Notes: This 177-nucleotide RNA was probed chemically with 2A3 and DMS. The data come from the RNA Mapping Database (RMDB), library OK1LIB. For DMS the reverse transcriptase was MarathonRT.
[RMDB]
RNA sequence: GGGAACGACUCGAGUAGAGUCGAAAAGAAAGAAAUCACUAAUCGGAUCAAAGCGAUGUAACUGAGCAAUGAGUGAUUGAUCUACGAAUAACUCGUAGUGAGUGAUCCAAUAUCCGUAUUAGAGAAAGGGUUACAAUGUGUUCGCACAUUGUAACCCAAAAGAAACAACAACAACAAC
Reactivity to 2A3 in 0.01 (KOAc 150mM, MgCl2 10mM, bicine 150mM(pH8.5), 24C), signal-to-noise 3, nucleotides 027 to 126: g150a020a070a010g120a050a060a020u040c010a000c050u000a020a000u000c000g000g040a020u100c100a080a090a000g000c040g070a020u110g140u170a010a250c110u060g110a010g030c030a120a100u090g060a010g050u260g000a010u020u030g030a010u000c000u000a000c010g000a030a040u190a170a090c050u000c000g000u000a000g010u020g030a050g040u250g050a000u000c000c010a000a080u090a020u080c010c000g080u100a060u000u060a070g010a020g010a010a090a070
Reactivity to DMS in 0.01 (KOAc 150mM, MgCl2 10mM, bicine 150mM(pH8.5), 24C), signal-to-noise 2, nucleotides 027 to 126: g000a150a060a150g000a120a120a080u000c040a090c080u000a130a060u000c000g030g000a030u000c100a000a050a170g000c070g000a130u000g020u060a180a140c300u000g000a300g000c000a030a210u040g000a180g000u010g000a000u000u010g000a090u000c050u010a000c060g000a000a090u050a000a120c270u000c000g000u000a000g020u000g030a150g040u000g000a000u000c000c000a080a160u000a050u000c030c040g010u000a040u000u000a050g000a060g000a010a100a070